[RMDB]
RNA sequence: GGGAACGACUCGAGUAGAGUCGAAAAUCAUCGAGAUGCAGUGAGUGCCUCUCCAGCAUAAAGAAAACUGUUGAUGAAACUACCAAUUUAUCAGAAAAGAUUGAGCUGCUUGCUUAUAAUCUGCAACUUACUAGUCACUGCAGUAACUGUCACCCCACCCCUUGUAUUAGUUCGCUAAUACAAGGGGAAAAGAAACAACAACAACAAC
Reactivity to DMS in 0.01 (KOAc 150mM, MgCl2 10mM, bicine 150mM(pH8.5), 24C), signal-to-noise 3, nucleotides 027 to 156: u010c070a110u000c060g020a180g000a130u000g020c020a030g010u010g000a160g010u000g010c040c000u010c050u010c060c030a110g010c020a120u010a080a090a170g000a090a120a130a100c050u010g000u000u000g010a090u000g010a070a060a130c040u000a180c040c030a050a090u000u010u000a060u010c050a180g000a140a070a120a080g010a120u010u000g000a060g050c020u000g000c090u010u000g020c030u000u000a080u000a080a070u000c000u010g010c020a030a080c050u000u010a060c100u010a100g030u000c030a080c060u010g020c030a040g000u000a040a100c090u000g010u010c060a180c020c010c010c020a210
Reactivity to 2A3 in 0.01 (KOAc 150mM, MgCl2 10mM, bicine 150mM(pH8.5), 24C), signal-to-noise 6, nucleotides 027 to 156: u090c030a020u070c040g060a010g020a130u050g010c000a020g020u030g080a050g070u050g040c000c010u080c030u010c030c010a020g000c030a030u140a150a180a030g150a020a130a040a020c050u050g020u100u050g030a100u030g030a090a070a050c070u090a100c040c010a030a040u060u100u090a100u130c050a040g150a110a130a040a000g040a040u050u070g010a020g030c020u090g020c060u200u190g010c010u070u090a080u050a180a060u050c020u030g030c010a050a070c020u040u110a050c030u150a040g030u040c010a010c040u010g000c010a000g010u030a030a050c040u060g070u130c030a110c010c000c010c010a040